Source: RMDB library OK2TRN, as collected in RNAgym.
An RNA of 177 nucleotides, treated with DMS and 2A3 and read out base by base.
The reactions ran in a buffer of 150 mM KOAc, 10 mM MgCl2 and 150 mM bicine (pH 8.5), at 24 C.
For 2A3, 2,330 sequencing reads were counted.
High 2A3 reactivity points to a flexible backbone, as in loops and unpaired stretches.
For DMS, 4,892 sequencing reads were counted.
RNA sequence: GGGAACGACUCGAGUAGAGUCGAAAAAUUGGGGAUUUGGACGUGAUCUUGAGGGCUCAUGAUCUCCAAGUCAAAGGAAACAAAACGGCAAAGAUCAAUGAGUUGAUGACGAAACUGGAAAGUGAUAACUGGACUAAAAUUUCGAUUUUAGUCCAGUAAAAGAAACAACAACAACAAC
Reactivity to DMS in 0.01 (KOAc 150mM, MgCl2 10mM, bicine 150mM(pH8.5), 24C), signal-to-noise 5, nucleotides 027 to 126: a130u010u000g010g020g010g010a060u010u000u000g000g010a070c100g020u010g000a070u000c030u000u020g020a140g020g000g010c060u010c020a040u000g000a020u000c030u010c020c010a240a100g010u000c070a060a100a160g010g010a110a050a090c060a020a070a110a070c160g000g000c160a060a100a040g000a020u000c030a050a070u000g000a060g000u000u000g010a080u000g010a050c070g010a060a060a050c040u010g000g000a090a040a080g010u000g010a110u000a100
Reactivity to 2A3 in 0.01 (KOAc 150mM, MgCl2 10mM, bicine 150mM(pH8.5), 24C), signal-to-noise 2, nucleotides 027 to 126: a000u120u090g010g010g000g040a000u060u020u110g040g020a040c030g050u050g090a080u020c030u080u050g100a190g060g090g000c000u010c030a020u020g010a020u000c000u000c020c010a000a020g010u000c030a130a060a000g140g020a080a060a060c080a030a110a030a020c030g020g000c020a080a040a030g010a020u020c020a040a220u080g000a040g060u120u060g060a030u030g010a030c040g030a080a040a000c030u030g020g050a100a080a070g030u060g020a020u040a110